[RMDB]
RNA sequence: GGGAACGACUCGAGUAGAGUCGAAAAGCAACGGACUGAACGGGACCUGCGCCGGCAGCCAGUUGUCGUUGGCGCCGCCGUUCCACGAGUUGUGCAUGCCGAUCCAGCUGUGGUCCGGGUCGUUGACCCGGAGAGAUCUAUUCGUAGAUCUCUCCGGAAAAGAAACAACAACAACAAC
Reactivity to DMS in 0.01 (KOAc 150mM, MgCl2 10mM, bicine 150mM(pH8.5), 24C), signal-to-noise 9, nucleotides 027 to 126: g010c020a030a030c020g010g010a110c110u000g010a070a050c030g010g000g010a090c300c040u010g010c050g020c050c010g000g010c010a040g010c050c110a110g010u000u010g010u000c050g010u000u000g020g010c040g010c020c190g010c060c030g000u000u000c030c070a040c040g000a200g010u000u000g010u000g010c060a080u010g000c060c030g010a070u000c050c040a110g010c060u000g010u010g010g000u000c030c010g010g000g000u000c010g000u000u000g000a150c090
Reactivity to 2A3 in 0.01 (KOAc 150mM, MgCl2 10mM, bicine 150mM(pH8.5), 24C), signal-to-noise 9, nucleotides 027 to 126: g010c010a000a020c030g050g080a030c060u060g030a090a020c020g030g020g080a080c010c040u040g010c010g000c010c010g010g000c010a010g040c040c070a140g060u170u120g110u140c050g040u050u080g010g000c010g010c000c020g050c020c010g020u050u010c040c020a020c020g090a080g020u040u040g050u090g020c050a070u110g050c010c020g010a040u030c040c020a040g050c100u120g050u110g150g030u010c030c030g010g000g000u000c000g010u030u080g130a160c010

Chemical mapping of a 177-nucleotide RNA with DMS and 2A3. The DMS profile rests on 69,977 reads. For 2A3 the reverse transcriptase was SuperScript II with manganese.